[RMDB]
RNA sequence: GGGAACGACUCGAGUAGAGUCGAAAAGUCGCGCUGGUCGGACGCGCACAGCGUCACCGAGGCGAUGCUGAAGGACGCCGGUUGCCAUCUGCGCGCCUACACGUGGCUCGAAGAAGACGAGGACAGCCCGCACCCCGAGCUGGCCGCGAUCGUCGGCCUAUUGUACGUGGUUCGCCACGUACAAUAGAAAAGAAACAACAACAACAAC
Reactivity to DMS in 0.01 (KOAc 150mM, MgCl2 10mM, bicine 150mM(pH8.5), 24C), signal-to-noise 2, nucleotides 027 to 156: g000u010c030g060c000g040c040u010g030g000u000c030g040g020a020c020g030c000g000c070a160c040a110g010c010g040u000c010a110c060c000g000a300g030g030c000g000a040u000g010c030u080g010a160a090g010g000a050c030g010c000c010g020g020u010u000g020c100c060a090u010c060u000g000c030g000c000g030c000c010u000a080c060a040c000g010u010g010g000c030u000c040g020a120a130g000a070a060g010a110c020g000a060g000g000a090c030a060g030c000c000c000g010c070a180c080c100c060c030g010a080g000c010u010g010g010c020c000g010c020g020a170u010c050g000u000c010g020g020c040
Reactivity to 2A3 in 0.01 (KOAc 150mM, MgCl2 10mM, bicine 150mM(pH8.5), 24C), signal-to-noise 4, nucleotides 027 to 156: g010u010c000g000c010g000c140u110g060g030u040c050g050g020a160c010g010c000g030c010a020c030a070g050c050g030u040c020a060c110c010g040a090g030g020c060g010a070u130g030c050u070g040a110a050g070g020a020c010g010c010c010g070g020u090u110g050c040c030a110u090c080u050g010c000g000c000g000c000c010u030a040c050a000c020g050u050g000g000c000u020c050g070a100a070g070a100a020g030a020c010g010a030g010g030a020c010a010g000c000c020c020g000c040a100c000c050c020c030g000a010g000c020u040g000g000c010c000g040c030g090a170u090c030g060u010c000g000g020c000
This 207-nucleotide RNA was probed chemically with DMS and 2A3. For DMS the reverse transcriptase was MarathonRT. The reactions ran in a buffer of 150 mM KOAc, 10 mM MgCl2 and 150 mM bicine (pH 8.5), at 24 C. For 2A3 the reverse transcriptase was SuperScript II with manganese.